RNA sequence: GGGAACGACUCGAGUAGAGUCGAAAAGAUAUGGAUGACUAAGGCUGAUGACCCUAAUACAGCUGUAUACAUUCGGAAACGAAUGUAUACAGCCGAGGUUAGGCAAGGCCGAAGUCAUCCUAAGUCACGUACGGUUAUAGUUCGCUAUAACCGUACGAAAAGAAACAACAACAACAAC
Reactivity to 2A3 in 0.01 (KOAc 150mM, MgCl2 10mM, bicine 150mM(pH8.5), 24C), signal-to-noise 1, nucleotides 027 to 126: g040a040u110a050u210g000g000a000u010g000a000c010u060a070a030g000g050c010u020g040a300u170g040a170c000c000c010u000a010a000u030a040c000a000g000c000u000g000u010a010u020a010c010a000u000u000c020g050g060a000a140a020c000g000a010a010u010g000u000a010u000a010c010a000g010c000c000g000a050g000g050u010u010a000g000g000c010a030a060g010g010c000c000g000a000a010g000u000c000a000u000c000c000u000a010a010g030u010c040a000
Reactivity to DMS in 0.01 (KOAc 150mM, MgCl2 10mM, bicine 150mM(pH8.5), 24C), signal-to-noise 3, nucleotides 027 to 126: g010a060u010a300u010g010g000a000u000g020a010c010u000a050a300g000g000c000u000g020a110u010g010a100c300c000c000u000a000a000u000a000c000a030g000c000u000g030u000a010u000a000c000a010u000u000c000g010g030a150a090a250c000g000a000a000u000g000u000a000u000a000c010a000g000c000c000g000a300g010g000u000u010a000g000g000c020a050a040g000g040c010c000g000a140a050g000u000c000a020u020c000c000u000a020a120g010u000c060a300